[RMDB]
RNA sequence: GGGAACGACUCGAGUAGAGUCGAAAACGGGGGGGAGUUUGGAGCGCGGGGGGGACCGUCGGGUCCGUGGGAUGCCCUUCCCGAUUCCGUCCAUCCCCACCCCCGGGUGUCCCCCCAGGAAUGGCGGAACGGAUGCCCUUCGGGGCAUCCAAAAGAAACAACAACAACAAC
Reactivity to 2A3 in 0.01 (KOAc 150mM, MgCl2 10mM, bicine 150mM(pH8.5), 24C), signal-to-noise 2, nucleotides 027 to 129: c050g000g000g010g000g000g000g010a060g040u100u140u120g120g070a120g060c100g000c000g020g000g000g000g030g000g010a000c020c010g230u220c230g070g030g010u000c000c000g070u210g000g000g020a020u010g000c000c060c000u020u010c020c010c000g000a050u060u000c010c000g040u030c000c000a030u040c060c010c000c000a030c010c000c000c000c020g010g100g000u040g090u000c000c000c000c020c000c000a010g010g110a070a050u060g030g000c000g000g000a000a030c000